Chemical mapping of a 177-nucleotide RNA with DMS and 2A3. In probing experiments dimethyl sulfate is read out at A N1 and C N3, which are open when not base-paired. DMS adducts were read by reverse transcription with MarathonRT. The RNA was probed in 150 mM KOAc, 10 mM MgCl2 and 150 mM bicine (pH 8.5) at 24 C. Values cover nucleotides 27 to 126. The DMS profile rests on 43,475 reads. For 2A3 the reverse transcriptase was SuperScript II with manganese.
[RMDB]
RNA sequence: GGGAACGACUCGAGUAGAGUCGAAAAGUAUCCAUGUUCGCAUGGAUACGAAAUAUGCGCGCGUAUAUCCGGUUGGCUGGAUGCGCGCGUCUGCCUGGCCGGUGGUGCUAGUCUUCGGACUAGCAAAAUGAACAUUCUAUUUCGAUAGAAUGUUCAUAAAAGAAACAACAACAACAAC
Reactivity to DMS in 0.01 (KOAc 150mM, MgCl2 10mM, bicine 150mM(pH8.5), 24C), signal-to-noise 9, nucleotides 027 to 126: g010u000a000u000c000c000a010u000g010u000u010c210g030c000a010u000g000g000a010u000a000c000g000a050a060a090u010a060u000g000c010g010c000g010c010g020u000a080u010a140u000c000c000g010g010u010u010g020g020c040u000g000g010a020u000g000c010g010c010g010c000g010u000c060u000g010c020c010u000g010g010c060c050g010g020u000g010g010u000g010c000u000a010g000u000c000u000u010c200g020g010a020c000u000a000g000c000a010a010a070
Reactivity to 2A3 in 0.01 (KOAc 150mM, MgCl2 10mM, bicine 150mM(pH8.5), 24C), signal-to-noise 9, nucleotides 027 to 126: g000u010a000u000c000c010a000u010g040u030u060c260g010c120a000u000g010g010a000u000a010c000g000a010a010a010u300a090u130g010c010g000c000g000c010g020u030a120u020a030u230c020c020g040g110u210u270g300g130c070u050g020g000a010u010g000c000g000c000g000c000g000u000c000u030g020c000c000u030g040g030c030c020g050g020u090g010g040u050g000c000u000a000g000u000c000u020u040c240g100g000a000c000u000a000g000c000a000a020a000